[RMDB]
RNA sequence: GGGAACGACUCGAGUAGAGUCGAAAAGAUCGCUCGUCCAGGUGGGGUGAGUGACCCCCGAUGGUCUCUGGCGGUGCCAGGGCACCCCAUCGGUACGGGUUUCGGGUUGCCCGUCCUAAGGGGUGUGGCGCGUAGGAUCGUUCGCGAUCUUACGCGCAAAAGAAACAACAACAACAAC
Reactivity to 2A3 in 0.01 (KOAc 150mM, MgCl2 10mM, bicine 150mM(pH8.5), 24C), signal-to-noise 2, nucleotides 027 to 126: g000a060u000c020g000c000u010c000g020u000c000c010a020g020g120u140g070g050g000g010u010g020a040g040u040g020a000c000c020c000c020c020g020a080u050g020g020u000c000u000c000u070g010g000c060g080g110u110g030c010c000a050g040g000g000c000a000c000c000c000c000a010u060c050g000g000u040a000c010g000g030g000u010u040u150c050g010g000g000u040u060g000c000c010c000g010u010c000c000u030a070a080g000g000g000g030u010g010u010g060
Reactivity to DMS in 0.01 (KOAc 150mM, MgCl2 10mM, bicine 150mM(pH8.5), 24C), signal-to-noise 2, nucleotides 027 to 126: g000a040u000c000g000c020u000c020g000u010c010c010a220g000g000u020g000g000g000g030u020g000a060g020u000g000a020c030c050c000c060c060g000a090u000g010g000u020c020u030c040u000g010g000c000g000g040u030g040c010c000a020g010g000g010c020a010c000c000c000c000a050u000c240g000g000u040a020c020g010g000g000u000u030u020c080g050g010g010u010u010g000c010c030c000g010u000c000c000u040a160a190g000g000g010g010u000g000u000g010